[RMDB]
RNA sequence: GGGAACGACUCGAGUAGAGUCGAAAAGAUAUGGAGCGACCCAACGAAAGUGACGCGUUGAAAUCGGAAACGAUGGAGCGUCAUGAGUAGUUGCGCUCCUAAGUCAAAAGAGGUGUUCGCACCUCAAGAAUACACGAUAGUUCGCUAUCGUGUAUUCAAAAGAAACAACAACAACAAC
Reactivity to 2A3 in 0.01 (KOAc 150mM, MgCl2 10mM, bicine 150mM(pH8.5), 24C), signal-to-noise 7, nucleotides 027 to 126: g030a010u090a050u150g000g000a010g000c010g030a150c130c130c060a000a000c010g030a030a000a010g010u010g000a000c010g030c030g180u300u070g030a030a030a010u000c010g020g040a080a040a050c010g010a000u010g020g030a020g000c000g000u000c000a000u010g000a000g010u010a000g000u000u000g000c000g000c010u000c000c000u000a090a030g050u030c040a020a030a100a120g010a010g000g010u030g020u090u180c300g060c090a000c000c000u000c000a000a010
Reactivity to DMS in 0.01 (KOAc 150mM, MgCl2 10mM, bicine 150mM(pH8.5), 24C), signal-to-noise 8, nucleotides 027 to 126: g000a050u010a300u010g000g000a010g020c000g010a220c190c300c030a010a010c010g010a110a140a300g000u000g000a000c000g000c010g010u000u010g010a060a120a010u000c010g000g000a140a090a160c000g010a010u000g000g000a070g010c000g000u000c010a000u000g000a030g000u000a060g000u000u000g000c020g010c010u000c000c000u000a010a050g000u000c050a080a070a100a100g010a010g000g020u000g010u010u020c210g020c000a010c000c000u010c010a030a060

The record gives the reactivity of an RNA of 177 nucleotides to 2A3 and DMS. 2A3 adducts were read by reverse transcription with SuperScript II with manganese. DMS (dimethyl sulfate) methylates the pairing face of unpaired adenines and cytosines. Reactivities are given for positions 27 through 126. The reactions ran in a buffer of 150 mM KOAc, 10 mM MgCl2 and 150 mM bicine (pH 8.5), at 24 C. For 2A3, 27,152 sequencing reads were counted. As a SHAPE reagent, 2A3 marks flexible, mostly unpaired nucleotides at the ribose 2'-OH.